The record gives the reactivity of an RNA of 177 nucleotides to DMS and 2A3. DMS adducts were read by reverse transcription with MarathonRT. Source: RMDB library OK1LIB, as collected in RNAgym.

[RMDB]
RNA sequence: GGGAACGACUCGAGUAGAGUCGAAAAGAGGCAGAUCAGGAAGUUCAGUGCCACGAGAACCAAACCCAGACAGAUUAGUGAAUGCGUGGCUCGGCGUUGUAGGCGGUGGAAUUUCGCGACGCGCUUCAUGUGCUGUCAGCUUCGGCUGACAGCACAUAAAAGAAACAACAACAACAAC
Reactivity to DMS in 0.01 (KOAc 150mM, MgCl2 10mM, bicine 150mM(pH8.5), 24C), signal-to-noise 1, nucleotides 027 to 126: g000a020g010g000c040a000g020a110u000c040a070g000g040a090a150g000u000u000c110a030g090u060g040c030c000a000c040g000a070g000a050a150c000c120a000a130a210c060c000c030a120g000a150c190a050g000a130u000u060a050g060u020g050a090a100u040g040c000g150u010g000g010c000u020c050g000g000c080g000u000u000g020u090a030g000g040c000g050g010u000g000g000a000a130u030u050u000c000g000c150g000a010c040g020c130g000c000u000u020c060
Reactivity to 2A3 in 0.01 (KOAc 150mM, MgCl2 10mM, bicine 150mM(pH8.5), 24C), signal-to-noise 1, nucleotides 027 to 126: g110a050g000g130c000a000g000a000u000c000a010g160g020a110a110g000u230u080c280a010g110u000g020c000c000a000c050g010a090g000a090a000c090c020a050a000a000c000c000c000a000g040a180c050a000g190a180u000u230a000g160u020g010a150a090u010g010c070g000u040g000g060c070u010c010g000g000c000g070u040u140g050u150a000g000g160c000g000g030u010g000g000a120a260u130u000u190c010g000c000g020a000c000g010c010g000c090u000u180c070
2A3 adducts were read by reverse transcription with SuperScript II with manganese.
The RNA was probed in 150 mM KOAc, 10 mM MgCl2 and 150 mM bicine (pH 8.5) at 24 C.
Values cover nucleotides 27 to 126.